[RMDB]
RNA sequence: GGGAACGACUCGAGUAGAGUCGAAAAAAAAAGAUAUGGACCAUAUACCAGCAAUGGUGAAGCGUUGAAAGCUAAUCGGAAACGAUUAGCUGGAGCUUCACUGACUGGUAUGGUCCUAAGUCAAAAACAUUCCACUUACGUUCGCGUAAGUGGAAUGAAAAGAAACAACAACAACAAC
Reactivity to DMS in 0.01 (KOAc 150mM, MgCl2 10mM, bicine 150mM(pH8.5), 24C), signal-to-noise 2, nucleotides 027 to 126: a020a040a030a060a080g020a040u000a300u000g000g000a030c010c000a090u020a170u010a120c050c000a010g010c110a200a050u010g000g030u010g000a000a000g020c010g010u000u010g000a110a090a020g020c010u000a000a000u000c000g010g000a090a050a080c010g000a000u010u020a010g000c000u000g000g010a090g010c000u000u000c000a000c010u000g000a100c000u000g010g010u000a010u000g010g020u000c000c000u000a010a090g020u010c010a050a120a050a090a120
Reactivity to 2A3 in 0.01 (KOAc 150mM, MgCl2 10mM, bicine 150mM(pH8.5), 24C), signal-to-noise 1, nucleotides 027 to 126: a000a000a000a040a010g120a050u120a050u120g000g000a000c000c010a060u140a020u080a300c040c000a000g010c170a170a300u300g020g000u000g000a000a000g000c050g300u300u130g000a030a020a000g000c000u010a000a000u020c010g000g050a080a040a000c030g010a010u000u000a000g000c000u000g000g030a000g010c000u010u020c000a000c000u020g000a020c000u000g050g040u000a000u000g000g000u000c000c000u000a060a000g030u000c030a000a000a070a050a110
Structure probing data (DMS and 2A3) for a 177-nucleotide construct. It was measured as part of the RMDB library TTRDES. 2A3 adducts were read by reverse transcription with SuperScript II with manganese. The reactions ran in a buffer of 150 mM KOAc, 10 mM MgCl2 and 150 mM bicine (pH 8.5), at 24 C.